[RMDB]
RNA sequence: GGGAACGACUCGAGUAGAGUCGAAAACGCCGCCACGGUCUCGUUGGACUACUGCCUGUUCCACGUCAGGCCCGAGUCGGGCGGGCUGCUGCAGUUGGCCGUGGGGAGGCUGCACGACGUGGACGCCGCGAAGCUGACCGCGAGCAAUCCGGUGCACGUCUUCACUUAGUUUCGACUAAGUGAAGACAAAAGAAACAACAACAACAAC
Reactivity to 2A3 in 0.01 (KOAc 150mM, MgCl2 10mM, bicine 150mM(pH8.5), 24C), signal-to-noise 1, nucleotides 027 to 156: c050g030c010c000g020c020c000a050c030g030g040u020c050u030c080g050u090u280g040g020a040c090u100a040c020u090g070c000c010u170g070u080u050c010c010a000c020g010u010c040a040g020g030c000c010c000g060a070g140u190c030g000g040g000c000g000g000g000c040u100g010c010u030g000c000a010g000u030u120g160g030c030c060g000u070g010g070g010g010a040g100g040c000u020g010c010a050c080g000a000c030g030u030g010g000a000c060g000c040c040g000c000g040a060a100g070c050u090g080a130c000c070g050c020g000a050g070c010a040a120u030c000c010g000g030u080g000c020a040c110